[RMDB]
RNA sequence: GGGAACGACUCGAGUAGAGUCGAAAAGACAAUCCAGGGAACCGGAUGUCAUCACGUUGUUGCAGUACCAGAUGGCAUCUUAAAUCCGAUCUGCAAAUAACCAUGUAGAAAGCUGAUGUGGGCUUUAAAAACGUGGUGCUGUUCGCAGCACCACGAAGAAAUGUAAGAACUUCGGUUCUUACAUUUCAAAAGAAACAACAACAACAAC
Reactivity to DMS in 0.01 (KOAc 150mM, MgCl2 10mM, bicine 150mM(pH8.5), 24C), signal-to-noise 1, nucleotides 027 to 156: g020a080c000a040a060u000c030c010a100g010g010g040a080a150c080c070g010g000a050u000g020u000c000a060u000c040a180c120g030u000u000g020u000u000g010c020a100g030u000a110c050c020a170g000a040u000g020g030c000a030u000c030u000u000a050a100a130u000c050c020g040a100u000c020u030g000c030a040a090a110u010a000a150c060c070a110u000g000u000a090g010a140a040a160g030c070u000g000a070u000g030u000g010g030g020c040u000u000u000a030a090a090a060a120c030g030u000g000g020u000g010c000u000g000u000u000c180g020c030a030g000c020a040c000c020a010c000g010a020a040
Reactivity to 2A3 in 0.01 (KOAc 150mM, MgCl2 10mM, bicine 150mM(pH8.5), 24C), signal-to-noise 1, nucleotides 027 to 156: g060a020c060a050a180u050c020c070a040g040g000g030a060a010c070c060g000g000a000u010g000u020c010a010u000c000a010c140g020u050u070g020u030u050g050c060a060g060u110a070c050c030a060g010a010u000g020g000c000a000u010c010u020u020a030a040a030u040c000c020g010a100u030c020u000g000c010a060a080a100u200a080a130c070c050a020u110g010u060a040g120a110a070a010g010c050u080g050a090u120g140u100g060g040g030c040u070u060u090a000a110a020a000a010c030g030u000g000g000u000g000c000u000g000u000u070c170g000c060a020g060c040a000c000c000a010c000g000a000a000